[RMDB]
An RNA of 177 nucleotides, treated with 2A3 and DMS and read out base by base. The RNA was probed in 150 mM KOAc, 10 mM MgCl2 and 150 mM bicine (pH 8.5) at 24 C. For DMS the reverse transcriptase was MarathonRT.
RNA sequence: GGGAACGACUCGAGUAGAGUCGAAAAGAGGAGUCAUUCGUGACUCCUCAAAGGGAGCUCAACUCUCCCGCUCAAGUCCGAGAGCCUUCGGACCGAAAAGAAUGCUGUUCCUGUUCGCAGGAACAAAGUCACUUCUACCCUUCGGGGUAGAAGUGACAAAAGAAACAACAACAACAAC
Reactivity to 2A3 in 0.01 (KOAc 150mM, MgCl2 10mM, bicine 150mM(pH8.5), 24C), signal-to-noise 1, nucleotides 027 to 126: g010a000g000g000a010g010u030c010a000u100u110c180g080u050g000a000c000u000c010c000u010c000a020a000a010g020g000g030a000g010c020u020c180a040a030c040u020c000u000c000c020c010g030c020u070c010a040a070g000u000c000c010g000a010g010a060g220c040c050u080u010c010g030g000a010c010c010g090a050a000a000a080g130a090a060u190g050c070u030g050u000u010c000c000u010g020u040u090c230g000c030a000g040g010a010a000c020a020a010a020
Reactivity to DMS in 0.01 (KOAc 150mM, MgCl2 10mM, bicine 150mM(pH8.5), 24C), signal-to-noise 1, nucleotides 027 to 126: g040a010g030g050a000g010u000c000a080u000u000c190g010u000g000a010c010u000c000c010u010c030a030a010a060g000g000g020a020g010c150u010c300a070a130c300u010c010u000c000c000c000g000c060u000c110a110a140g000u000c000c010g000a030g000a060g010c200c080u010u000c030g020g000a010c000c040g000a070a040a040a100g010a040a080u010g000c120u010g010u000u000c000c000u010g000u000u010c200g010c010a000g020g000a000a000c000a000a010a100